[RMDB]
RNA sequence: GGGAACGACUCGAGUAGAGUCGAAAACAUUAGCUUCGGCAUCCCACCCUACGGCUUCGAAAAGCUGAGAUGAGCUGAGCAAGGGAACUCAAGAGACUCAACUCAGAGAACUCAGAGAGAGAAUAAACUCUUGUCAUAUGUUCGCAUAUGACAAGAGAAAAGAAACAACAACAACAAC
Reactivity to DMS in 0.01 (KOAc 150mM, MgCl2 10mM, bicine 150mM(pH8.5), 24C), signal-to-noise 2, nucleotides 027 to 126: c080a120u010u010a090g010c010u000u010c140g090g020c020a230u010c020c000c030a170c070c040c010u000a070c110g010g000c040u000u010c170g010a090a090a100a100g000c010u000g000a090g020a070u000g020a060g000c040u000g020a070g000c020a080a070g040g020g000a100a170c020u020c090a060a130g000a110g000a100c030u000c030a050a080c110u020c070a090g000a030g000a060a110c030u000c020a040g000a130g000a110g020a070g010a140a110u010a040a130a170
Reactivity to 2A3 in 0.01 (KOAc 150mM, MgCl2 10mM, bicine 150mM(pH8.5), 24C), signal-to-noise 3, nucleotides 027 to 126: c030a050u130u190a030g000c010u070u080c080g010g010c010a070u030c000c000c000a040c020c000c000u060a080c050g020g000c000u020u070c100g130a160a110a040a050g030c010u000g020a030g010a090u080g010a000g000c010u030g010a000g010c030a100a140g090g010g030a050a030c010u010c040a080a060g030a010g050a230c020u010c040a020a080c020u000c050a050g020a020g020a210a060c000u010c040a010g040a010g000a010g020a000g070a170a060u150a120a080a030